RNA sequence: GGGAACGACUCGAGUAGAGUCGAAAAGAAAGAAAGAACCCUUCCCGCGGGGCUGGAUCUUCCAGAUGGUGCGGGCCGGGACAAGGCGGAGAGUGUCCCGGUUUCAGAAACAACCUUCGGCAGCCAAACUAGACUACCCACUUCGGUGGGUAGUCAACAAGUCAAAAUACUUCGGUAUUUUGACUUGAAAAGAAACAACAACAACAAC
Reactivity to 2A3 in 0.01 (KOAc 150mM, MgCl2 10mM, bicine 150mM(pH8.5), 24C), signal-to-noise 2, nucleotides 027 to 156: g030a000a040a010g030a010a080a000g030a090a150c010c020c000u010u000c020c000c000g000c030g000g010g000g000c000u000g000g030a130u100c060u170u060c140c000a000g010a020u020g000g130u090g010c010g000g010g000c000c000g000g000g010a000c000a010a050g180g110c040g000g030a050g010a000g030u010g000u010c010c000c010g000g000u000u030u040c010a000g040a000a020a020c050a040a030c020c010u040u030c030g130g020c050a010g060c050c060a070a070a050c090u060a020g000a000c000u000a000c000c010c010a010c000u050u040c100g100g000u000g000g000g000u000a000g000u000c000a000a010
Overview: Chemical mapping of a 207-nucleotide RNA with 2A3. The data come from the RNA Mapping Database (RMDB), library M2RFPK. For 2A3, 1,532 sequencing reads were counted. Conditions: 150 mM KOAc, 10 mM MgCl2 and 150 mM bicine (pH 8.5), 24 C. Values cover nucleotides 27 to 156.